[RMDB]
RNA sequence: GGGAACGACUCGAGUAGAGUCGAAAAAUGGUUUUAGAGGACUUGCCGCGUGUUUGCCGCUUGCGUGAACACCGGGACUUUAUUGCAAGCUGGGCCUGUUGAUUUAGAUUCCGCUGCAAAGAAUCAGGGCUGAGUAUAACGGUUUUAGCGGAUACACCAGAAAGGUUAUGUUCGCAUAACCUUUCUGAAAAGAAACAACAACAACAAC
Reactivity to DMS in 0.01 (KOAc 150mM, MgCl2 10mM, bicine 150mM(pH8.5), 24C), signal-to-noise 1, nucleotides 027 to 156: a110u000g000g010u000u010u010u000a140g010a110g010g010a050c020u010u000g010c000c000g030c150g040u000g010u010u000u000g020c010c090g020c050u000u000g030c080g000u000g020a000a000c000a030c010c020g010g010g010a050c030u000u000u000a040u020u020g020c000a030a030g000c010u000g010g000g010c000c000u000g010u000u000g000a090u020u000u000a130g010a100u000u010c010c020g030c020u010g000c110a050a130a140g000a030a030u000c030a040g010g000g010c010u010g000a220g020u000a070u000a130a100c050g010g000u020u010u010u010a060g030c020g020g000a090u000a070c100a070c130
Reactivity to 2A3 in 0.01 (KOAc 150mM, MgCl2 10mM, bicine 150mM(pH8.5), 24C), signal-to-noise 4, nucleotides 027 to 156: a000u090g020g020u050u040u050u090a100g030a060g050g040a020c020u070u300g030c000c000g060c090g000u020g020u000u000u000g010c030c090g020c020u010u000g000c000g000u000g000a010a000c010a010c000c010g020g020g000a010c010u070u170u140a150u110u210g000c010a010a000g000c000u010g010g010g000c020c000u020g030u100u020g030a040u010u020u050a060g050a180u080u040c010c010g000c010u040g010c030a060a020a120g000a030a010u010c010a010g010g000g000c000u010g010a000g040u110a060u060a100a020c030g020g010u020u060u120u200a000g000c000g010g010a020u030a020c050a050c030
This 207-nucleotide RNA was probed chemically with DMS and 2A3. DMS adducts were read by reverse transcription with MarathonRT. Source: RMDB library ARCHII, as collected in RNAgym.